[RMDB]
RNA sequence: GGGAACGACUCGAGUAGAGUCGAAAAGGGGUCAAGGGAGGAUCGACACUGGCAUCGAUCUAUGGCUGAAGCCUCCACGGCCAUAGGGAGCCAGUGCCGAUCCAUCGAUCUUGACGGAGGCACCCAAAAGACGCCCUCUCUUCGGAGAGGGCGUCAAACUAACUUACGCUUUCGAGCGUAAGUUAGUAAAAGAAACAACAACAACAAC
Reactivity to 2A3 in 0.01 (KOAc 150mM, MgCl2 10mM, bicine 150mM(pH8.5), 24C), signal-to-noise 1, nucleotides 027 to 156: g030g000g070g010u010c000a000a000g010g000g010a000g000g000a000u000c010g020a010c010a000c010u010g020g020c020a090u300c180g000a010u020c000u000a000u000g000g040c000u030g000a050a000g020c000c010u000c010c000a000c000g000g020c000c000a000u000a000g010g000g000a000g010c000c000a000g000u000g000c000c000g000a000u000c000c000a000u040c000g000a000u010c000u000u000g000a000c010g010g000a000g000g020c000a040c010c000c010a020a080a030a030g000a000c020g010c000c010c000u000c000u030c010u060u100c300g100g000a000g000a000g010g000g000c000g010u000c000a000a000
An RNA of 207 nucleotides, treated with 2A3 and read out base by base.
Reactivities are given for positions 27 through 156.
The 2A3 profile rests on 2,889 reads.
2A3 adducts were read by reverse transcription with SuperScript II with manganese.
It was measured as part of the RMDB library RNAMAK.